[RMDB]
RNA sequence: GGGAACGACUCGAGUAGAGUCGAAAAGAUAUGGACCUUUCAAGGGAGUCACAAUCGGAAACGAUUGAAUGACGACGAUCUUGGAGGUCCUAAGUCAAAGUAAGGGGCGCUUCGGCGCCCCUUACAACCAUAUCCCAUAGUUCGCUAUGGGAUAUGGAAAAGAAACAACAACAACAAC
Reactivity to DMS in 0.01 (KOAc 150mM, MgCl2 10mM, bicine 150mM(pH8.5), 24C), signal-to-noise 2, nucleotides 027 to 126: g000a020u000a160u010g000g000a000c000c010u010u020u020c000a000a000g000g020g020a140g000u000c000a130c010a010a000u010c000g010g000a060a050a070c010g010a010u000u000g010a170a150u020g020a030c050g030a090c300g020a120u000c000u000u000g000g020a010g010g010u000c000c000u000a020a090g000u000c020a150a140a200g010u000a010a010g020g010g010g070c010g050c000u000u020c250g020g020c000g050c010c000c010c000u000u000a000c000a100a190